[RMDB]
This 177-nucleotide RNA was probed chemically with DMS and 2A3. The 2A3 profile rests on 13,800 reads. The DMS profile rests on 44,767 reads. 2A3 adducts were read by reverse transcription with SuperScript II with manganese. Reactivities are given for positions 27 through 126.
RNA sequence: GGGAACGACUCGAGUAGAGUCGAAAACUCGGUUUGCCAUGAACAGAACGUGCCUAGAGGUAGAUGUUCCAUUGAGGCCUAAGAGCAGGUGGUGCGUGGCUGUAGUCAGAUAGUAUCGCGAGCUGAAAUAUUUUUCAUUAUUCGUAAUGAAAAAUAUAAAAGAAACAACAACAACAAC
Reactivity to DMS in 0.01 (KOAc 150mM, MgCl2 10mM, bicine 150mM(pH8.5), 24C), signal-to-noise 9, nucleotides 027 to 126: c020u010c020g000g010u010u010u010g000c010c040a080u010g010a080a070c070a050g000a110a050c060g020u010g010c020c010u010a130g010a100g010g010u010a060g000a100u030g010u010u010c040c050a110u010u020g010a110g000g010c020c020u010a080a080g010a110g010c040a050g010g020u000g000g020u000g000c020g020u000g010g010c020u000g010u020a060g000u010c030a050g000a080u020a060g010u010a230u010c070g000c040g010a080g020c030u010g000a080a080
Reactivity to 2A3 in 0.01 (KOAc 150mM, MgCl2 10mM, bicine 150mM(pH8.5), 24C), signal-to-noise 9, nucleotides 027 to 126: c010u000c000g020g030u050u050u070g000c010c020a050u090g030a030a030c010a030g040a040a010c020g050u040g010c000c010u070a060g010a040g080g030u030a020g020a160u070g050u130u040c030c010a020u030u140g070a040g050g030c010c010u080a110a030g050a030g060c030a030g040g060u070g010g020u030g010c030g010u010g070g000c010u010g010u030a040g020u020c030a010g020a180u100a080g080u080a080u120c060g010c030g050a020g020c020u050g030a010a160